[RMDB]
RNA sequence: GGGAACGACUCGAGUAGAGUCGAAAAGAUAUGGAAGAGGACAUGAAGUUUUCACCCGAUGAAAGAAGCUUAUCGGAAACGAUAAGCUUCUGGAGGGUGGGUUACUUCAACAGCCUCUUCCUAAGUCCGCUUCAUACUAGUUCGCUAGUAUGAAGCGAAAAGAAACAACAACAACAAC
Reactivity to DMS in 0.01 (KOAc 150mM, MgCl2 10mM, bicine 150mM(pH8.5), 24C), signal-to-noise 1, nucleotides 027 to 126: g000a130u000a290u040g000g000a020a010g000a010g000g000a040c100a200u000g000a030a000g000u000u000u000u000c000a030c030c000c010g000a060u000g040a170a170a010g000a000a030g020c000u010u000a010u000c000g000g000a080a070a290c000g000a000u000a000a010g010c000u000u000c000u000g010g020a020g030g000g030u000g000g000g000u000u000a010c000u000u000c010a000a120c300a220g000c000c000u010c000u000u010c000c000u000a010a080g000u000c040
An RNA of 177 nucleotides, treated with DMS and read out base by base. For DMS the reverse transcriptase was MarathonRT. High DMS reactivity at an A or C suggests that its Watson-Crick edge is free.